[RMDB]
Annotation: Chemical mapping of a 177-nucleotide RNA with DMS and 2A3. Conditions: 150 mM KOAc, 10 mM MgCl2 and 150 mM bicine (pH 8.5), 24 C. The 2A3 profile rests on 1,465 reads. For DMS the reverse transcriptase was MarathonRT. 2A3 adducts were read by reverse transcription with SuperScript II with manganese. Reactivities are given for positions 27 through 126. Source: RMDB library OK2TST, as collected in RNAgym.
RNA sequence: GGGAACGACUCGAGUAGAGUCGAAAAUGGCGUAGUGGGUACGAAUCAGGUGCGCCACGUUAAUGCCCUUGACCGCACCAUCGGCAAAGUUAAUCGCCACAGUACCAACCAGAUUUUUCUGGAUGCACACCACGCUGAUAUUCGUAUCAGCGUGGUGAAAAGAAACAACAACAACAAC
Reactivity to DMS in 0.01 (KOAc 150mM, MgCl2 10mM, bicine 150mM(pH8.5), 24C), signal-to-noise 2, nucleotides 027 to 126: u000g010g000c060g040u000a070g020u000g000g000g050u010a030c020g000a140a160u000c270a100g000g010u000g000c000g010c090c050a000c060g000u010u000a100a050u000g020c070c090c020u000u000g010a110c040c130g010c010a100c050c030a030u000c150g000g010c030a090a040a160g000u000u030a090a090u000c040g000c020c000a050c110a090g000u000a120c040c000a060a250c000c000a040g000a100u000u000u000u000u000c010u010g000g000a160u010g010c280a150
Reactivity to 2A3 in 0.01 (KOAc 150mM, MgCl2 10mM, bicine 150mM(pH8.5), 24C), signal-to-noise 2, nucleotides 027 to 126: u040g030g000c020g000u050a020g070u080g070g030g000u090a030c030g140a120a130u160c100a100g060g070u010g020c050g220c000c010a030c010g000u000u140a060a030u130g020c000c000c000u000u040g050a060c020c030g000c000a060c050c000a040u040c030g000g000c030a070a080a030g020u140u150a110a040u110c030g000c000c000a020c010a010g000u030a030c000c000a030a020c000c000a020g010a060u180u300u030u060u020c000u000g060g020a080u130g050c070a060